Structure probing data (DMS and 2A3) for a 177-nucleotide construct. For DMS, 2,453 sequencing reads were counted. 2A3 adducts were read by reverse transcription with SuperScript II with manganese. For 2A3, 4,661 sequencing reads were counted. The RNA was probed in 150 mM KOAc, 10 mM MgCl2 and 150 mM bicine (pH 8.5) at 24 C. For DMS the reverse transcriptase was MarathonRT.
[RMDB]
RNA sequence: GGGAACGACUCGAGUAGAGUCGAAAAGAUAUGGAGUCUGACAUGGGAGGAGUGGUCGGAAACGACCAUACUCCAUCGAUCAUGCAGACUCCUAAGUCAAAAGAACACGACCUUCGGGUCGUGUUCAGUUCUGAAUGUUCUUCGGAACAUUCAGAACAAAAGAAACAACAACAACAAC
Reactivity to DMS in 0.01 (KOAc 150mM, MgCl2 10mM, bicine 150mM(pH8.5), 24C), signal-to-noise 2, nucleotides 027 to 126: g000a050u000a170u020g010g000a010g020u000c010u020g000a180c010a010u010g020g020g010a150g000g010a040g030u000g020g000u010c000g030g000a030a030a090c010g010a010c010c000a070u000a010c030u010c000c000a140u010c280g000a150u020c000a020u000g000c000a010g010a010c010u000c000c010u000a000a070g010u000c020a160a080a110a110g000a020a010c010a000c020g000a010c010c020u000u000c260g030g000g020u000c010g030u000g010u000u000c000a060
Reactivity to 2A3 in 0.01 (KOAc 150mM, MgCl2 10mM, bicine 150mM(pH8.5), 24C), signal-to-noise 2, nucleotides 027 to 126: g000a000u030a000u040g000g000a000g010u000c010u030g050a300c020a020u050g070g180g140a100g030g010a010g040u000g000g000u000c000g000g020a000a010a010c000g010a000c000c000a010u050a040c010u000c000c010a030u120c070g060a170u160c000a000u020g000c020a000g010a010c000u010c000c000u000a010a000g000u000c000a010a000a110a230g010a000a000c000a000c000g020a010c020c010u070u160c300g160g010g000u000c000g010u000g000u000u000c000a000